Source: RMDB library VIROID, as collected in RNAgym. The record gives the reactivity of an RNA of 207 nucleotides to DMS and 2A3. For DMS, 5,811 sequencing reads were counted. Conditions: 150 mM KOAc, 10 mM MgCl2 and 150 mM bicine (pH 8.5), 24 C. For 2A3 the reverse transcriptase was SuperScript II with manganese.
[RMDB]
RNA sequence: GGGAACGACUCGAGUAGAGUCGAAAAAGAAAGGCUAAGGACCUCGCAAUGAGGUAAGGUGGGACUUUUCCUUCUGGAACCAAGCGGUUGGUUCCGAGGGGGGUGUGAUCCAGGUACCGCCGUAGAAACUGGGUUACGACGUCUACCCGGGAUUCAAUCGUAUUUACAUGUUCGCAUGUAAAUACGAAAAAGAAACAACAACAACAAC
Reactivity to DMS in 0.01 (KOAc 150mM, MgCl2 10mM, bicine 150mM(pH8.5), 24C), signal-to-noise 2, nucleotides 027 to 156: a070g000a040a050a050g010g020c010u000a100a070g000g010a080c000c010u020c020g050c080a180a180u000g000a040g000g020u000a040a030g020g030u000g010g010g020a090c050u000u000u000u000c010c000u000u010c010u000g040g020a020a040c010c020a030a090g000c210g030g050u010u000g020g020u010u000c000c010g000a050g030g000g020g040g000g010u000g000u000g010a050u000c010c020a090g020g030u000a110c080c050g070c000c090g020u000a100g020a050a080a270c020u000g010g010g030u000u000a140c020g020a090c020g030u000c040u000a050c020c000c010g000g000g000a200u000u000c080a070a300
Reactivity to 2A3 in 0.01 (KOAc 150mM, MgCl2 10mM, bicine 150mM(pH8.5), 24C), signal-to-noise 4, nucleotides 027 to 156: a010g050a020a010a000g040g000c020u030a010a040g060g040a060c000c000u030c040g050c170a210a200u300g000a010g020g000u030a030a070g040g000u040g010g010g030a030c030u080u060u050u060c000c000u030u050c100u240g000g010a010a000c000c000a020a020g100c060g180g060u050u030g020g000u000u020c000c000g000a020g010g000g000g010g030g000u090g030u040g020a050u040c010c030a000g010g030u030a020c010c030g030c010c020g030u040a040g090a030a170a030c010u030g020g000g010u030u020a010c060g020a020c040g080u000c010u020a040c000c000c000g020g020g000a080u090u080c020a020a080